Overview:
Structure probing data (2A3 and DMS) for a 177-nucleotide construct. Conditions: 150 mM KOAc, 10 mM MgCl2 and 150 mM bicine (pH 8.5), 24 C. 2A3 adducts were read by reverse transcription with SuperScript II with manganese. DMS adducts were read by reverse transcription with MarathonRT. Reactivities are given for positions 27 through 126. For 2A3, 2,400 sequencing reads were counted.
[RMDB]
RNA sequence: GGGAACGACUCGAGUAGAGUCGAAAAGAUAUGGAUCCGUGUACUCCGAGGAUCUCGGAAACGAGGGAGGAGACACCGGAUCCUAAGUCAAAAGAAUUGAUGAUAGGUUCGCCUAUCAUCAAUUCAACCUAUCGAUGUCCUUCGGGACAUCGAUAGGAAAAGAAACAACAACAACAAC
Reactivity to 2A3 in 0.01 (KOAc 150mM, MgCl2 10mM, bicine 150mM(pH8.5), 24C), signal-to-noise 2, nucleotides 027 to 126: g030a020u080a020u140g000g000a010u000c000c000g040u030g000u070a300c010u010c000c000g030a230g110g000a000u000c010u000c010g020g000a110a050a060c030g020a020g000g000g020a010g000g020a010g030a020c010a010c030c030g000g000a010u010c000c000u000a010a020g000u010c060a080a040a050a160g020a000a000u000u010g000a010u000g010a000u000a000g000g110u050u130c300g130c080c020u020a010u000c000a000u010c000a000a000u000u020c000a010a000
Reactivity to DMS in 0.01 (KOAc 150mM, MgCl2 10mM, bicine 150mM(pH8.5), 24C), signal-to-noise 1, nucleotides 027 to 126: g020a050u000a300u000g000g000a010u000c000c000g000u000g000u000a240c000u000c000c000g010a080g030g020a060u010c000u000c000g000g000a090a050a210c000g000a000g000g000g000a010g040g030a020g000a020c000a010c090c090g040g000a020u000c000c010u010a000a060g040u010c030a110a060a190a120g000a030a010u020u000g000a010u000g000a010u000a020g010g000u000u010c270g020c010c010u000a000u010c000a020u020c010a010a000u010u000c000a070a060